[RMDB]
RNA sequence: GGGAACGACUCGAGUAGAGUCGAAAAUCUGUUCUAUAGGCUCGUACCUCUGUUUCCUUGAUUUCUCAAGAGACAGGCCCUUAACCCUGGUUGAUGAACCAUGACCGUGCGGCUAGAGCGUGAUUGACCUCCGUAUUGUCUUCGGACAAUACGGAGGAAAAGAAACAACAACAACAAC
Reactivity to 2A3 in 0.01 (KOAc 150mM, MgCl2 10mM, bicine 150mM(pH8.5), 24C), signal-to-noise 4, nucleotides 027 to 126: u010c010u030g030u030u030c020u020a080u060a110g010g070c060u050c200g050u100a110c010c020u000c010u000g030u000u020u080c090c000u040u020g060a090u070u260u080c200u020c040a020a030g000a000g010a020c010a010g010g030c020c000c040u070u160a080a050c030c010c010u000g050g040u000u040g090a220u120g080a040a030c030c010a040u080g030a040c010c080g060u060g030c060g000g000c010u020a020g000a010g010c040g080u060g010a060u010u030g030a030
Reactivity to DMS in 0.01 (KOAc 150mM, MgCl2 10mM, bicine 150mM(pH8.5), 24C), signal-to-noise 1, nucleotides 027 to 126: u000c040u000g000u000u010c020u020a070u000a090g070g000c070u030c050g000u000a160c030c080u030c000u040g020u000u000u000c110c000u000u010g000a060u040u050u090c130u000c000a000a020g040a060g020a010c000a040g040g000c000c000c060u020u030a100a030c130c070c020u000g000g000u000u000g010a260u010g010a100a000c020c030a030u000g000a100c080c000g080u000g000c100g010g000c040u000a000g000a070g030c020g030u000g000a090u000u020g000a170
About this RNA: This 177-nucleotide RNA was probed chemically with 2A3 and DMS. The reactions ran in a buffer of 150 mM KOAc, 10 mM MgCl2 and 150 mM bicine (pH 8.5), at 24 C. Source: RMDB libraries RFM100 and RFMREP, as collected in RNAgym. For DMS, 1,680 sequencing reads were counted. Values cover nucleotides 27 to 126.